Source: RMDB library RNAMAK, as collected in RNAgym. Structure probing data (2A3) for a 207-nucleotide construct. The 2A3 profile rests on 2,267 reads. The RNA was probed in 150 mM KOAc, 10 mM MgCl2 and 150 mM bicine (pH 8.5) at 24 C. For 2A3 the reverse transcriptase was SuperScript II with manganese.

RNA sequence: GGGAACGACUCGAGUAGAGUCGAAAAGCUGCGUGUUCGCACGCAGCAAAAAUCCUAAGUCUAGCGAUAAGGGGAGUGGCUUUGAUCUAUCGGAAACGAUAGGGAGCCAUCCUUUUGACGCUAGAUAUGGAAAAAAAGUGAGUCUUCGGACUCACAAGAUUCCAGUGACAUUCGUGUCACUGGAAUCAAAAGAAACAACAACAACAAC
Reactivity to 2A3 in 0.01 (KOAc 150mM, MgCl2 10mM, bicine 150mM(pH8.5), 24C), signal-to-noise 3, nucleotides 027 to 156: g000c010u010g000c010g010u010g030u060u170c300g030c120a000c000g020c000a000g000c020a020a020a010a000a000u010c010c000u020a090a010g030u010c000u000a000g000c000g050a070u010a090a020g030g010g020g040a110g230u100g010g020c050u300u170u060g110a080u060c000u000a000u000c000g040g020a130a020a080c020g000a000u000a020g010g000g010a000g000c000c000a040u060c000c000u000u010u000u020g010a000c010g020c000u000a000g000a000u010a000u000g020g060a020a050a070a060a040a010a010g010u030g000a010g000u020c010u000u080c300g080g010a010c000u010c000a000c000a000a040